[RMDB]
RNA sequence: GGGAACGACUCGAGUAGAGUCGAAAAUGUCCUUCAGAUAUGAAACAGAUACAAGACUUCCUCAGGUAAACAAAAGUUGAAGGAGUUUAUCAGCAACUACUCUUGCCUUACAAGAUAUGCCAGAGGGAGUUAUUCAGGCUUAAAUGGAAGGAUGAUAUAUAUGAUCGGUGUUCGCACCGAUCAUAUAAAAAGAAACAACAACAACAAC
Reactivity to 2A3 in 0.01 (KOAc 150mM, MgCl2 10mM, bicine 150mM(pH8.5), 24C), signal-to-noise 1, nucleotides 027 to 156: u150g000u000c000c000u010u010c030a060g070a180u140a080u200g070a000a070a000c010a030g050a000u150a030c130a010a280g000a010c000u020u000c010c000u000c000a000g000g020u080a140a070a010c100a150a010a030a090g030u070u080g100a110a110g030g010a000g050u050u120u140a150u160c010a000g210c050a050a020c000u000a010c030u000c000u020u040g050c030c010u130u130a030c020a020a020g000a080u120a000u290g010c000c010a000g050a000g000g000g000a000g000u010u000a000u000u060c010a000g000g060c000u100u240a080a090a020u160g000g000a000a000g000g010a020u070g000a000u020a000
Reactivity to DMS in 0.01 (KOAc 150mM, MgCl2 10mM, bicine 150mM(pH8.5), 24C), signal-to-noise 1, nucleotides 027 to 156: u000g020u000c000c020u000u000c000a110g030a080u010a050u000g000a150a090a250c010a290g010a100u000a150c100a140a150g000a050c000u000u000c010c000u000c040a080g040g050u000a050a150a150c060a100a040a040a080g040u000u000g000a040a060g000g050a140g010u000u000u020a040u000c090a270g020c100a060a000c000u020a130c080u030c000u010u000g000c000c040u000u050a170c120a110a180g010a270u000a030u000g020c000c000a180g060a080g050g000g040a010g000u000u050a010u000u000c090a050g040g010c120u000u000a130a100a180u000g010g000a080a010g040g010a030u010g010a100u000a190